[RMDB]
RNA sequence: GGGAACGACUCGAGUAGAGUCGAAAAGCUUAGUUCGCUAAGCGCCGCGAUAUGGAGCUUAUAAGACAGACGCUAUCAGCCAUUUCGGAAACGAAAUGGCAAUGAUAGACCCGUCAAUGACGUAAGCUCCUAAGUCUUGACACCGCUUCGGCGGUAAAAAAUCACACAUCUUCGGAUGUGUGAUUUUAAAAGAAACAACAACAACAAC
Reactivity to 2A3 in 0.01 (KOAc 150mM, MgCl2 10mM, bicine 150mM(pH8.5), 24C), signal-to-noise 2, nucleotides 027 to 156: g000c000u000u020a000g030u090u140c150g040c100u000a000a010g010c030g040c000c010g130c090g020a050u060a060u260g000g000a000g030c000u000u000a000u010a090a080g080a060c040a050g000a020c020g030c060u000a000u010c010a050g300c030c000a000u000u000u000c010g020g000a000a130a110c010g000a000a000a000u000g000g010c000a010a000u030g000a000u000a010g020a070c040c020c000g010u010c080a160a270u090g010a000c040g000u000a000a000g000c000u010c010c000u000a000a000g010u000c010u030u050g050a020c010a010c110c000g030c040u020u060c190g100g010c000g000g000u100a010a000
Reactivity to DMS in 0.01 (KOAc 150mM, MgCl2 10mM, bicine 150mM(pH8.5), 24C), signal-to-noise 1, nucleotides 027 to 156: g000c040u000u010a040g030u000u000c230g010c040u010a000a010g000c000g050c080c100g010c120g000a160u010a130u000g010g010a010g010c000u000u000a020u000a110a160g010a030c010a070g000a040c020g030c000u000a000u010c000a120g000c000c000a010u010u000u000c020g000g020a180a180a300c010g000a000a000a000u010g010g000c010a000a020u000g000a010u010a000g010a080c040c000c040g040u000c010a140a140u010g020a140c160g000u000a020a000g020c000u000c020c000u000a010a070g010u000c060u000u010g000a090c100a120c020c010g010c020u010u020c300g050g050c010g030g010u000a000a000